[RMDB]
This 177-nucleotide RNA was probed chemically with DMS and 2A3.
The 2A3 profile rests on 799 reads.
DMS adducts were read by reverse transcription with MarathonRT.
Reactivities are given for positions 27 through 126.
RNA sequence: GGGAACGACUCGAGUAGAGUCGAAAAGGUGGGGGCCGGCACAGAGGGACACACCGGGCCGGGGCGCCGAGGAUAGCUACCGCCCGCAGGGAUAGUAAAUAUCCGUGACCAGUGGCCUCGGUGGCUGGCAGAAAUACCGAUUCGUCGGUAUUUCUGCAAAAGAAACAACAACAACAAC
Reactivity to DMS in 0.01 (KOAc 150mM, MgCl2 10mM, bicine 150mM(pH8.5), 24C), signal-to-noise 1, nucleotides 027 to 126: g000g070u000g030g020g030g000g010c000c000g000g000c070a090c100a080g050a110g040g000g000a100c110a160c020a070c060c030g000g000g000c030c030g070g020g000g000c030g000c020c090g010a200g010g000a100u020a050g000c050u010a070c070c000g080c040c020c050g000c080a050g000g000g010a010u010a010g000u070a060a070a200u000a000u010c000c030g000u000g000a210c210c200a140g000u010g020g010c020c030u000c000g000g000u010g020g000c020u000g000
Reactivity to 2A3 in 0.01 (KOAc 150mM, MgCl2 10mM, bicine 150mM(pH8.5), 24C), signal-to-noise 1, nucleotides 027 to 126: g040g000u040g000g040g010g020g000c000c000g050g000c070a030c020a090g120a070g030g020g060a030c000a000c000a000c050c040g000g080g000c000c020g040g000g060g000c000g030c000c030g000a030g060g000a010u040a150g000c000u040a130c060c020g000c000c000c000g000c080a020g000g000g000a000u000a020g080u120a090a200a110u010a000u020c020c000g040u020g000a070c000c000a000g040u020g110g020c000c000u050c060g000g000u020g000g020c040u000g020